Source information:
Source: RMDB libraries RFM100 and RFMREP, as collected in RNAgym. The record gives the reactivity of an RNA of 177 nucleotides to DMS and 2A3. The RNA was probed in 150 mM KOAc, 10 mM MgCl2 and 150 mM bicine (pH 8.5) at 24 C.
[RMDB]
RNA sequence: GGGAACGACUCGAGUAGAGUCGAAAACCCCCGCUUGCCCAGUCUUAUCGCUUCGAGUGUCAGCUCCAGCAACUGUUCGGGCGGAUCAAGGGAGAUUCCGGCGUGGGCGCCAAGCUACAUGGCGAUCAAUAAGCAAGUUGUUCGCAACUUGCUUAUUAAAAGAAACAACAACAACAAC
Reactivity to DMS in 0.01 (KOAc 150mM, MgCl2 10mM, bicine 150mM(pH8.5), 24C), signal-to-noise 7, nucleotides 027 to 126: c010c000c000c030c020g020c040u000u010g000c060c080c020a050g010u010c110u010u030a080u020c110g010c020u010u020c220g010a040g020u020g010u020c200a100g000c020u010c030c130a050g010c040a120a070c040u000g000u010u010c060g020g000g010c000g000g000a080u020c130a110a110g000g010g000a120g000a140u010u000c040c040g000g020c080g020u010g000g000g000c010g000c020c020a040a090g010c070u020a060c100a090u010g000g010c020g000a080u030c130
Reactivity to 2A3 in 0.01 (KOAc 150mM, MgCl2 10mM, bicine 150mM(pH8.5), 24C), signal-to-noise 8, nucleotides 027 to 126: c000c000c000c000c000g020c020u020u070g010c000c010c000a030g010u010c040u110u210a160u170c080g020c040u090u090c090g050a040g020u110g160u120c050a030g020c020u000c020c020a020g000c020a040a070c030u050g030u070u040c010g000g020g000c060g010g000a040u090c060a070a080g050g050g000a070g010a100u110u040c030c010g020g000c030g030u080g010g030g000c000g000c020c020a050a010g010c000u060a070c060a110u090g040g000c020g020a050u090c010